RNA sequence: GGGAACGACUCGAGUAGAGUCGAAAAUGGACCCGCCGCCCAAGUUCGAGCAUGGGCCAAUUCCGAACGAAGAGACGCGAGACGGGAGAGAUCAGCGCCCGAGAGGGGUAAAUGGUAAAGAGCAUUGGAACGCCGAGGGGACACCUCCCAAGAAGGAGACUAUAGCUUCGUUCGCGAAGCUAUAGUCAAAAGAAACAACAACAACAAC
Reactivity to 2A3 in 0.01 (KOAc 150mM, MgCl2 10mM, bicine 150mM(pH8.5), 24C), signal-to-noise 2, nucleotides 027 to 156: u020g020g020a070c020c020c020g000c020c050g000c040c020c010a110a000g090u130u150c060g090a060g020c040a100u170g000g030g000c000c010a060a080u110u050c010c000g020a070a050c030g070a130a100g020a000g000a020c040g030c030g050a040g020a060c060g000g000g000a030g030a000g000a060u140c020a020g050c030g100c090c020c010g090a070g060a030g040g020g010g020u060a050a070a040u100g050g040u050a060a040a030g040a020g000c030a020u040u130g020g010a090a000c070g080c090c000g020a050g000g020g000g030a000c010a060c030c000u010c070c000c000a000a020g090a050a010g060g040a100

Structure probing data (2A3) for a 207-nucleotide construct. It was measured as part of the RMDB library VIROID. For 2A3, 849 sequencing reads were counted. The reactions ran in a buffer of 150 mM KOAc, 10 mM MgCl2 and 150 mM bicine (pH 8.5), at 24 C.